[RMDB]
RNA sequence: GGGAACGACUCGAGUAGAGUCGAAAAGAUAUGGACGCAUGCAUGGAGUAGUGGUGAGCUAAGACAGGUGGUCGGAAACGACCACUCGAGCUCACGCACUACUAUGAAGUGCAUGCGUCCUAAGUCACUGUAGUGGUUUCUUCGGAAACCACUACAGAAAAGAAACAACAACAACAAC
Reactivity to DMS in 0.01 (KOAc 150mM, MgCl2 10mM, bicine 150mM(pH8.5), 24C), signal-to-noise 2, nucleotides 027 to 126: g020a020u010a300u010g000g020a000c020g060c010a010u000g000c010a000u000g000g020a060g010u000a010g020u000g000g020u000g000a000g020c010u000a200a130g050a180c300a100g000g000u000g030g010u000c000g020g030a110a050a210c000g000a010c000c000a040c000u000c040g000a020g000c000u000c000a010c010g000c020a010c020u000a000c010u000a090u000g000a140a240g010u000g000c000a000u000g020c000g010u010c000c000u000a000a020g000u000c050a180